This 177-nucleotide RNA was probed chemically with 2A3 and DMS. For DMS the reverse transcriptase was MarathonRT. The DMS profile rests on 6,896 reads.
[RMDB]
RNA sequence: GGGAACGACUCGAGUAGAGUCGAAAAGAUAUGGACCUGAGAAGGAGAAGGUAUCGGAAACGAUAUGCUUCGCGAAACUUCCAGGUCCUAAGUCAAACGAACUCACGACUUCGGUCGUGAGUUCGAACUACCAAAAUGAGUUCGCUCAUUUUGGUAGAAAAGAAACAACAACAACAAC
Reactivity to 2A3 in 0.01 (KOAc 150mM, MgCl2 10mM, bicine 150mM(pH8.5), 24C), signal-to-noise 4, nucleotides 027 to 126: g000a000u030a000u050g000g010a010c000c010u220g030a260g030a300a010g060g110a170g010a040a010g040g010u020a010u000c000g010g010a000a000a010c030g000a000u020a000u140g300c000u000u020c000g000c030g090a300a250a010c010u020u000c000c000a000g010g000u000c000c000u000a000a000g000u000c010a010a050a130c030g000a000a000c000u000c030a000c000g030a020c060u100u100c300g050g010u020c000g010u000g000a000g000u000u000c000g000a010a010
Reactivity to DMS in 0.01 (KOAc 150mM, MgCl2 10mM, bicine 150mM(pH8.5), 24C), signal-to-noise 4, nucleotides 027 to 126: g000a020u000a010u010g000g010a010c000c000u000g010a160g020a010a010g020g020a090g000a030a020g000g000u000a010u010c000g010g010a020a010a030c000g010a010u000a000u000g010c000u000u000c000g030c270g010a080a090a300c000u010u000c000c000a000g010g000u000c000c000u000a000a050g010u000c010a080a140a280c020g000a010a000c000u000c000a000c000g000a040c010u000u010c230g030g010u000c010g010u000g000a000g010u000u010c000g000a060a160